Structure probing data (2A3 and DMS) for a 177-nucleotide construct.
2A3 adducts were read by reverse transcription with SuperScript II with manganese.
Reactivities are rounded to 0.1 and cut off at 0 and 3.
The RNA was probed in 150 mM KOAc, 10 mM MgCl2 and 150 mM bicine (pH 8.5) at 24 C.
[RMDB]
RNA sequence: GGGAACGACUCGAGUAGAGUCGAAAAGGAGCAGGUACAGAUUGGAUUGAUUACGGCGGAAGGAUAAUAACUCACGAAGGGAGCUUGAAGUGGUUUCCUGGCCCUCGAAAUAAGCAGCAGAGGGGACGUUAUAUCACUCGUUCGCGAGUGAUAUAACAAAAGAAACAACAACAACAAC
Reactivity to 2A3 in 0.01 (KOAc 150mM, MgCl2 10mM, bicine 150mM(pH8.5), 24C), signal-to-noise 3, nucleotides 027 to 126: g060g000a010g010c030a020g020g020u060a070c020a030g030a030u030u070g050g010a020u020u150g040a020u070u140a070c030g000g000c010g030g000a030a020g030g010a000u040a160a020u020a090a020c030u030c020a050c040g020a030a050g000g040g040a000g030c010u030u010g020a130a050g040u100g070g000u010u030u030c000c000u070g080g010c000c000c000u010c010g040a040a030a060u230a100a010g090c100a000g000c030a020g030a000g000g030g000g000a010c300
Reactivity to DMS in 0.01 (KOAc 150mM, MgCl2 10mM, bicine 150mM(pH8.5), 24C), signal-to-noise 4, nucleotides 027 to 126: g010g010a070g020c050a020g000g010u010a050c090a060g000a100u020u010g010g010a100u000u010g010a080u000u010a100c070g010g000c070g000g010a100a100g000g000a080u020a070a050u020a080a070c080u010c050a110c100g000a080a090g020g010g010a080g030c050u000u000g010a030a120g010u000g000g020u000u000u000c010c030u000g010g000c010c010c020u000c010g000a080a070a090u030a060a100g020c170a060g000c100a120g000a060g000g000g000g000a080c160